[RMDB]
RNA sequence: GGGAACGACUCGAGUAGAGUCGAAAAAUGAGAUCCCAUCUUGCACACUGUGCUAAUUUGAGAUUCUCAUGCCUCCUACUUGGAGAGAUCUGGACUAGAAGUCACGGCAUCUGACUCUGCCAGCCACAAAACGUACAAGGCUUCGGCCUUGUACGAACCAGUCCUAAUUCUUCGGAAUUAGGACUGGAAAAGAAACAACAACAACAAC
Reactivity to 2A3 in 0.01 (KOAc 150mM, MgCl2 10mM, bicine 150mM(pH8.5), 24C), signal-to-noise 5, nucleotides 027 to 156: a000u010g000a010g000a010u000c000c000c000a010u010c010u010u000g000c000a020c040a070c180u300g010u010g020c040u110a060a070u000u010u020g040a040g000a030u300u070c000u010c010a010u040g040c000c010u020c000c010u090a240c120u110u230g030g000a040g010a020g020a120u040c010u020g010g020a070c040u080a140g020a190a030g120u010c010a050c080g110g020c070a070u040c080u050g010a000c010u000c000u020g010c000c010a010g020c050c000a090c040a060a080a050a030c010g010u000a000c000a000a000g000g000c000u010u130c160g040g000c000c000u000u000g000u000a000c000g000a000a000
Reactivity to DMS in 0.01 (KOAc 150mM, MgCl2 10mM, bicine 150mM(pH8.5), 24C), signal-to-noise 1, nucleotides 027 to 156: a080u020g000a000g010a050u000c020c010c000a080u000c040u000u020g010c000a040c000a170c150u050g070u000g010c010u000a010a030u000u010u000g010a020g010a050u020u000c000u000c000a030u000g010c070c020u000c000c010u000a080c230u000u020g010g000a090g010a070g020a110u000c000u010g020g040a080c070u010a060g000a080a070g020u000c010a070c040g000g020c170a100u000c060u010g010a030c020u000c020u000g020c000c060a080g000c010c040a040c090a040a080a130a170c030g030u020a010c010a010a000g010g000c000u010u000c290g080g020c020c010u000u010g000u010a010c000g000a050a090
Structure probing data (2A3 and DMS) for a 207-nucleotide construct. The RNA was probed in 150 mM KOAc, 10 mM MgCl2 and 150 mM bicine (pH 8.5) at 24 C. Source: RMDB library M2RFPK, as collected in RNAgym. The 2A3 profile rests on 3,805 reads.